[RMDB]
An RNA of 177 nucleotides, treated with DMS and 2A3 and read out base by base. The DMS profile rests on 26,358 reads. Reactivities are rounded to 0.1 and cut off at 0 and 3. For DMS the reverse transcriptase was MarathonRT.
RNA sequence: GGGAACGACUCGAGUAGAGUCGAAAAGAUAUGGACGUAGUUUGUGCAAACACAAUGAUGUCGGAAACGAUUGAGUGUUUGAACUACACAUGCUACGUCCUAAGUCAAAGUGCGGUUCGCCGCACAACGAGAAAUAUUAGUUCGCUAAUAUUUCUCGAAAAGAAACAACAACAACAAC
Reactivity to DMS in 0.01 (KOAc 150mM, MgCl2 10mM, bicine 150mM(pH8.5), 24C), signal-to-noise 9, nucleotides 027 to 126: g000a040u000a300u000g010g010a010c000g020u000a000g010u000u000u000g020u000g000c010a010a010a010c000a010c000a160a140u010g010a110u010g010u000c000g010g000a090a070a160c010g010a010u000u010g000a140g020u000g010u000u010u000g000a050a030c140u020a300c010a000c010a000u000g000c000u000a000c000g000u000c000c000u000a000a060g000u000c030a080a090a120g000u000g010c000g010g010u000u010c270g010c010c000g000c000a000c010a030a100
Reactivity to 2A3 in 0.01 (KOAc 150mM, MgCl2 10mM, bicine 150mM(pH8.5), 24C), signal-to-noise 9, nucleotides 027 to 126: g010a000u060a010u090g000g000a000c000g000u000a000g010u000u020u030g010u020g030c000a000a010a000c000a000c030a120a250u300g130a110u300g050u020c000g000g010a050a040a010c000g010a010u040u230g130a130g090u000g000u000u010u020g040a060a040c090u270a050c220a000c000a010u000g000c000u000a000c010g000u000c000c000u000a010a000g000u000c010a090a030a020g010u010g000c010g020g050u050u140c300g040c090c000g000c000a000c000a000a020